[RMDB]
RNA sequence: GGGAACGACUCGAGUAGAGUCGAAAAAUGCAUGGUCAUGUACAUGCGCGAUGUCUAGACGAUCUGUGUCACAUGCCAUGGUACUGGAUCGAUCGAUGACUAGCUAGCUAGCCAUGCAUGCGAUCCGCGCGUGGAUCACAUUCGUGUGAUCCACGCGAAAAGAAACAACAACAACAAC
Reactivity to 2A3 in 0.01 (KOAc 150mM, MgCl2 10mM, bicine 150mM(pH8.5), 24C), signal-to-noise 2, nucleotides 027 to 126: a000u040g030c030a000u020g000g060u190c080a120u150g030u070a080c010a160u170g080c020g000c000g050a030u260g020u000c010u020a000g000a010c000g020a040u020c010u020g060u000g030u030c030a090c010a040u140g230c140c020a040u050g000g000u020a000c030u100g030g000a010u020c000g180a290u000c020g030a050u230g010a010c000u000a000g000c000u000a040g020c010u010a000g000c010c020a000u020g000c020a000u000g000c050g050a050u080c010c020g080
Reactivity to DMS in 0.01 (KOAc 150mM, MgCl2 10mM, bicine 150mM(pH8.5), 24C), signal-to-noise 1, nucleotides 027 to 126: a000u010g000c000a000u000g000g000u010c060a100u020g000u010a070c130a160u010g000c140g000c030g020a050u000g010u000c070u020a180g000a030c000g000a040u000c050u000g000u010g010u000c070a020c130a080u010g010c250c170a130u000g020g020u000a010c060u010g000g000a010u000c000g000a140u000c030g010a060u040g000a000c000u010a100g000c040u000a070g000c000u000a170g000c000c030a000u000g000c000a010u000g000c140g000a040u000c010c000g010